[RMDB]
RNA sequence: GGGAACGACUCGAGUAGAGUCGAAAAGGUGAGCUGGACGGGAAGUAGGUCCAGCGACUGCGUCCGAAGCUUUGAUAAGAGCAACUCCAUCUACGUUGCUCAAGUAGGUGGUAGCAGCAAACACCGAACCGCGGUCCAUGUUCGCAUGGACCGCGGUAAAAGAAACAACAACAACAAC
Reactivity to DMS in 0.01 (KOAc 150mM, MgCl2 10mM, bicine 150mM(pH8.5), 24C), signal-to-noise 1, nucleotides 027 to 126: g050g000u000g000a160g000c000u000g000g000a000c030g000g000g060a050a090g050u000a140g000g000u000c000c000a060g000c050g000a110c000u000g000c000g000u000c080c000g060a220a220g000c000u000u000u000g080a170u060a070a110g000a050g000c000a000a150c000u000c220c070a060u000c090u000a000c300g000u000u000g000c100u000c040a000a020g000u000a000g000g000u050g000g000u000a110g100c080a000g100c180a100a150a170c000a000c010c000g000a040
Reactivity to 2A3 in 0.01 (KOAc 150mM, MgCl2 10mM, bicine 150mM(pH8.5), 24C), signal-to-noise 1, nucleotides 027 to 126: g010g000u030g010a070g000c000u000g000g000a000c070g000g000g000a100a110g060u300a030g000g110u000c000c000a000g000c000g000a000c000u000g000c000g140u000c010c010g000a040a000g000c000u000u100u040g230a180u160a220a110g000a000g000c000a000a000c000u000c100c030a050u110c100u100a300c180g030u130u030g090c050u000c000a000a000g000u000a000g000g220u220g000g000u060a080g000c000a000g010c000a060a060a060c000a000c000c080g000a000